[RMDB]
RNA sequence: GGGAACGACUCGAGUAGAGUCGAAAAAACUGACCGCUGGGAUUGUUAUUCGCACAUGUACUACCCACCGCUCCUGAAGCGCGCACGGGAGCGAGGUACAUAGCGAGCAACAAUCCUGUGCUGAAGCGCGCACGGCAACCGAAAGGUGCGAAUGCAAGAUAAAGGAAGAGUUCGCUCUUCCUUUAUCAAAAGAAACAACAACAACAAC
Reactivity to 2A3 in 0.01 (KOAc 150mM, MgCl2 10mM, bicine 150mM(pH8.5), 24C), signal-to-noise 2, nucleotides 027 to 156: a000a000c120u100g040a070c080c000g000c010u020g000g000g000a000u010u000g000u010u040a040u040u000c000g000c020a170c020a290u020g000u010a010c010u050a050c040c060c060a020c060c000g000c000u010c000c010u020g070a220a020g000c000g000c000g010c000a020c000g000g000g000a000g000c000g010a010g010g000u000a000c000a000u010a050g020c020g000a010g010c020a010a000c000a000a010u010c020c000u000g000u000g010c000u050g000a100a050g000c000g000c000g000c010a010c010g000g000c020a020a010c000c010g100a130a040a010g000g000u010g010c040g020a080a060u150g060c040a030a070
Reactivity to DMS in 0.01 (KOAc 150mM, MgCl2 10mM, bicine 150mM(pH8.5), 24C), signal-to-noise 2, nucleotides 027 to 156: a130a080c040u000g040a110c060c010g000c040u010g000g040g000a040u000u010g020u000u000a040u000u000c020g030c040a150c100a140u010g020u000a060c000u000a050c030c030c030a300c100c030g030c000u010c020c010u000g010a080a040g010c030g000c000g000c040a270c020g020g000g000a020g070c010g010a040g000g000u000a000c070a030u000a080g020c030g040a020g030c010a040a020c000a040a060u000c010c000u040g040u000g020c000u000g000a100a040g010c030g040c010g040c030a300c040g000g000c040a040a060c010c010g000a070a090a120g010g040u020g030c010g020a120a150u000g010c100a020a190